[RMDB]
RNA sequence: GGGAACGACUCGAGUAGAGUCGAAAAAAGAUAUGGAGUAUAGUAUGACUAUGAAGUCCUGCGCUGACUCUGAUCGGAAACGAUCAGAGGUGGAGCAGGAUGGAGUCAUACGUACUCCUAAGUCAAACUCACGUUGAUUGUUCGCAAUCAACGUGAGAAAAGAAACAACAACAACAAC
Reactivity to 2A3 in 0.01 (KOAc 150mM, MgCl2 10mM, bicine 150mM(pH8.5), 24C), signal-to-noise 2, nucleotides 027 to 126: a000a000g030a000u010a000u070g000g010a000g020u010a010u090a130g020u020a000u140g010a000c000u090a250u300g000a000a020g000u030c020c010u010g000c050g150c300u300g000a040c010u050c030u000g010a010u020c030g000g030a020a020a010c030g000a000u000c010a000g000a020g000g000u070g070g300a000g000c000a000g000g000a000u000g000g000a000g000u000c000a010u010a000c030g000u060a000c000u000c000c000u000a000a020g010u030c000a010a000a140

Chemical mapping of a 177-nucleotide RNA with 2A3. Reactivities are given for positions 27 through 126. For 2A3 the reverse transcriptase was SuperScript II with manganese.